[RMDB]
RNA sequence: GGGAACGACUCGAGUAGAGUCGAAAAGAUGGGACUGGGCGUCCACGAACGUCAUAUUCAACAAUCGCCCUCUGUUUGCUGGACAAUAUGUUCCGUGGGACUCCGGAAACUUUGAUCCGGCCACCAAGUACAAAGACCAAUUCGUUGGUCUUUGUACAAAAGAAACAACAACAACAAC
Reactivity to 2A3 in 0.01 (KOAc 150mM, MgCl2 10mM, bicine 150mM(pH8.5), 24C), signal-to-noise 3, nucleotides 027 to 126: g030a050u080g030g000g030a020c080u090g030g010g030c030g010u020c030c070a060c110g080a170a010c000g030u020c030a080u060a150u250u160c030a070a040c010a080a160u100c050g060c030c030c040u050c030u060g160u010u230u140g000c020u010g020g020a000c020a030a040u100a070u300g040u000u000c010c010g000u090g040g070g050a070c090u000c060c010g000g030a020a030a040c040u000u020u030g050a140u160c010c000g010g000c000c000a020c020c030a110a000
Reactivity to DMS in 0.01 (KOAc 150mM, MgCl2 10mM, bicine 150mM(pH8.5), 24C), signal-to-noise 4, nucleotides 027 to 126: g000a090u020g010g010g010a090c090u000g000g010g010c060g000u000c060c100a080c230g020a060a040c030g000u010c130a110u000a110u010u000c080a080a140c120a090a090u010c050g000c020c020c000u000c130u000g010u000u000u010g020c030u010g000g000a040c020a060a020u010a050u010g010u000u000c010c020g000u000g010g010g010a090c130u020c050c020g010g010a010a030a030c070u000u000u000g000a150u000c000c010g010g000c010c170a070c080c070a050a120